Notes:
The record gives the reactivity of an RNA of 207 nucleotides to 2A3. The RNA was probed in 150 mM KOAc, 10 mM MgCl2 and 150 mM bicine (pH 8.5) at 24 C.
RNA sequence: GGGAACGACUCGAGUAGAGUCGAAAAAAGCAACUUCAGAGUCACAAAGGAUGGGUAGGACAUAGACAAUAGUCCACCUCAUCUGGAGUUCUACAUUAGCUUCACUUUGUCCACCCGGCAGCCUCACCAUUCUCAGCCCCGUGCUUCCAGUGCCGCACCCAGCUAUGCAGUUCGCUGCAUAGCUGGGAAAAGAAACAACAACAACAAC
Reactivity to 2A3 in 0.01 (KOAc 150mM, MgCl2 10mM, bicine 150mM(pH8.5), 24C), signal-to-noise 1, nucleotides 027 to 156: a000a000g110c070a050a050c030u100u060c090a090g020a090g120u110c020a020c080a080a090a000g130g010a050u140g010g010g060u070a270g060g010a010c020a030u080a060g070a060c080a150a210u100a090g010u030c020c000a000c000c000u130c030a010u000c000u000g000g030a040g000u090u050c080u100a060c030a110u050u050a040g040c050u000u020c040a030c070u060u090u080g020u040c040c000a020c030c060c040g000g020c070a030g020c070c000u030c000a060c010c020a090u150u010c000u010c030a020g020c000c000c010c010g040u030g030c010u070u030c060c000a010g010u000g060c010c010g030c040a020